[RMDB]
RNA sequence: GGGAACGACUCGAGUAGAGUCGAAAAGAGGCUGGCUAGCGCGUGCGCGAGAGCCGUUUGCCGUUCCUCCGAGAAGAGAUGGAAGAACGCGCCUGCGUGGAUGGCUGCGACAUGGCCUCGGAGCGGAAAACAUAGCGUUGUUCGCAACGCUAUGUUUAAAAGAAACAACAACAACAAC
Reactivity to 2A3 in 0.01 (KOAc 150mM, MgCl2 10mM, bicine 150mM(pH8.5), 24C), signal-to-noise 3, nucleotides 027 to 126: g080a010g030g010c040u040g050g030c020u040a050g020c070g000c030g120u120g050c130g000c000g060a040g000a000g060c020c010g000u020u030u080g080c020c000g000u060u020c000c010u000c010c070g120a130g050a220a040g050a020g020a060u120g030g050a080a110g020a120a000c000g030c040g020c000c000u060g010c020g040u080g070g120a120u120g080g000c040u090g000c010g030a050c050a100u150g040g000c000c000u000c020g010g030a030g010c060g060g030a050
Reactivity to DMS in 0.01 (KOAc 150mM, MgCl2 10mM, bicine 150mM(pH8.5), 24C), signal-to-noise 4, nucleotides 027 to 126: g000a060g010g020c000u000g020g010c020u010a050g020c010g000c020g010u010g020c150g000c000g000a090g010a080g000c000c010g020u000u000u000g010c020c010g000u010u000c040c010u000c030c040g010a120g010a140a110g000a140g010a080u010g010g010a080a070g010a060a090c020g010c100g010c010c010u010g000c090g040u000g000g000a110u010g000g000c020u010g010c050g000a110c120a060u000g010g010c050c000u000c010g020g010a120g010c090g000g000a120
An RNA of 177 nucleotides, treated with 2A3 and DMS and read out base by base. The data come from the RNA Mapping Database (RMDB), library OK2TST.